An RNA of 307 nucleotides, treated with DMS and read out base by base. For DMS the reverse transcriptase was MarathonRT.

RNA sequence: GGGAACGACUCGAGUAGAGUCGAAAAACUGCUCGUACGCGAGCAGAGGUUGAAUUCAGUGUCGUAGCAGGAAUUCUUAGAGCUGGCCGUCCCAAGAUGGGGUGGAGAGAGCGGCAUGAAAGAGAGAGAGAGAGAGAGACACGCCUGAAUGGCAGCAGCAGGCCUUAGCGGCAAUGGACAGCAGGCACAGGACCAGCUUUGCCUCGAGCCGCAACGCUGAUGCCAGAAAAGGACAACCUCUCCAGAAUCGCCGCAGUGUGCUUCCAAGCGUUCAAUUCGUUGAACGCAAAAGAAACAACAACAACAAC
Reactivity to DMS in 0.01 (KOAc 150mM, MgCl2 10mM, bicine 150mM(pH8.5), 24C), signal-to-noise 3, nucleotides 027 to 266: a160c010u000g000c010u000c010g020u010a120c220g040c020g010a020g000c000a010g020a040g010g020u010u030g010a070a070u000u010c060a090g010u020g020u020c080g010u010a100g000c050a030g000g010a130a070u010u000c020u010u010a100g010a120g000c030u010g000g000c040c020g010u000c010c010c020a110a140g010a170u020g010g010g000g020u020g000g000a060g000a090g020a130g030c030g010g000c010a070u010g000a090a120a080g000a100g010a100g000a100g010a090g010a070g000a120g000a080g000a140g020a090c120a100c240g000c010c010u010g010a100a110u000g000g000c000a020g010c040a020g000c010a100g000g020c140c110u000u000a120g000c040g000g010c000a110a100u030g010g010a080c150a060g010c070a040g000g000c030a110c200a100g000g010a110c060c050a060g000c010u000u010u010g010c000c010u000c180g010a250g010c020c020g000c030a030a040c110g000c000u000g000a040u000g010c030c010a000g000a030a070a190a040g000g000a080c050a140a110c120c010u010c010u000c010c040a110g010a140a040u010c130g020c010c020g010c050a070g010u000g000u000g010c020u000u000c010c030a030a260